Chemical mapping of a 177-nucleotide RNA with 2A3 and DMS. Values are in units of 0.01, from 0 to 300, in steps of 10. The reactions ran in a buffer of 150 mM KOAc, 10 mM MgCl2 and 150 mM bicine (pH 8.5), at 24 C. In probing experiments dimethyl sulfate is read out at A N1 and C N3, which are open when not base-paired. For 2A3 the reverse transcriptase was SuperScript II with manganese.

RNA sequence: GGGAACGACUCGAGUAGAGUCGAAAACAUGGAAGCACAUGCCUGUCGUGACAGUGCUCUGGAGGGUCAGGCAUGAGAAUAGUGAGUUUGAGAUCUUAGGGUACUGCAAGACCAUUCCAACAAAACACCCAUCGAUCACUUUCGAGUGAUCGAUGGGAAAAGAAACAACAACAACAAC
Reactivity to 2A3 in 0.01 (KOAc 150mM, MgCl2 10mM, bicine 150mM(pH8.5), 24C), signal-to-noise 1, nucleotides 027 to 126: c050a090u090g070g040a130a000g000c060a030c000a060u020g000c000c020u000g010u030c100g300u030g030a010c030a020g050u100g140c080u000c020u120g000g060a060g070g300g020u030c010a000g040g000c000a000u010g000a020g060a120a110u210a070g120u160g040a030g050u020u010u080g060a090g010a090u000c030u000u080a060g000g000g100u130a090c020u080g020c050a010a010g000a020c010c000a020u020u070c050c000a000a010c000a040a140a000a020c080a030
Reactivity to DMS in 0.01 (KOAc 150mM, MgCl2 10mM, bicine 150mM(pH8.5), 24C), signal-to-noise 1, nucleotides 027 to 126: c000a060u000g010g020a150a120g000c080a230c080a040u000g040c000c010u000g010u000c010g040u000g010a280c060a010g000u000g000c210u000c050u010g000g010a240g010g020g000u000c050a000g040g010c010a010u000g010a080g010a050a070u020a160g010u000g000a110g000u000u000u020g040a090g000a030u000c060u010u010a070g020g010g010u010a020c050u000g000c000a060a060g000a010c030c070a100u000u000c040c030a160a060c090a060a040a010a090c300a120